An RNA of 207 nucleotides, treated with DMS and read out base by base. It was measured as part of the RMDB library RNAMAK.
RNA sequence: GGGAACGACUCGAGUAGAGUCGAAAAGCGUACUACUUAUUACAACUGCGUUGAAACAGAUAUCCAGGACAAGUCUUCCUACCCACCAGAUCCCAAAUAGGAUCUGAGGGAAGACUUGUCCUGGAUAUCUGUGGAGCAGUUGGAUAAUAAGUAUCGCCAAUAAAUGCUUGUUCGCAAGCAUUUAUUGAAAAGAAACAACAACAACAAC
Reactivity to DMS in 0.01 (KOAc 150mM, MgCl2 10mM, bicine 150mM(pH8.5), 24C), signal-to-noise 2, nucleotides 027 to 156: g030c050g040u000a070c030u000a090c050u010u010a000u020u000a100c020a020a010c010u010g020c000g030u000u020g010a300a170a050c010a030g000a040u000a010u020c010c000a040g030g000a040c000a000a000g010u000c000u000u010c000c000u000a040c030c020c010a300c160c000a000g030a010u000c000c000c000a040a080a250u010a050g000g010a020u010c000u010g000a110g020g000g000a010a000g020a000c000u010u000g000u000c000c010u000g000g010a000u000a000u010c000u000g030u000g000g000a210g010c000a000g020u000u010g000g010a110u000a000a030u000a020a040g000u000a010u000c040g050c050